[RMDB]
Structure probing data (DMS and 2A3) for a 177-nucleotide construct. The reactions ran in a buffer of 150 mM KOAc, 10 mM MgCl2 and 150 mM bicine (pH 8.5), at 24 C.
RNA sequence: GGGAACGACUCGAGUAGAGUCGAAAAAUCUGGGCACUAGUCUCAACAGAUGACGACACUUCUGUUCAAUCUCAUAUCCUAUCCAUACUGGAUGUAAAACACGCAUGUGGCGCUGACUGGUGCGUUAACUCUACCACUUCUUCGGAAGUGGUAGAGUAAAAGAAACAACAACAACAAC
Reactivity to DMS in 0.01 (KOAc 150mM, MgCl2 10mM, bicine 150mM(pH8.5), 24C), signal-to-noise 5, nucleotides 027 to 126: a070u010c050u010g000g010g000c020a010c010u000a030g020u000c000u000c150a070a100c110a050g010a040u010g010a150c100g020a090c170a080c040u000u000c030u010g010u000u000c170a080a100u010c070u000c040a090u030a070u000c050c040u000a100u010c070c070a110u020a090c170u020g010g000a020u010g010u020a020a030a040a040c070a040c090g000c100a040u010g010u020g000g000c120g020c060u010g000a020c000u000g000g010u000g010c010g000u020u010a070
Reactivity to 2A3 in 0.01 (KOAc 150mM, MgCl2 10mM, bicine 150mM(pH8.5), 24C), signal-to-noise 6, nucleotides 027 to 126: a010u070c060u070g010g070g000c000a010c020u010a010g020u010c020u010c100a070a160c030a060g070a070u090g080a110c070g050a010c030a010c050u060u020c020u020g020u040u050c030a040a080u000c040u010c050a040u030a020u130c010c010u040a040u050c060c040a060u070a280c120u150g010g020a040u010g030u100a030a100a040a010c050a010c060g080c030a030u110g020u040g070g010c030g000c070u010g020a020c000u010g010g000u010g010c010g020u010u030a020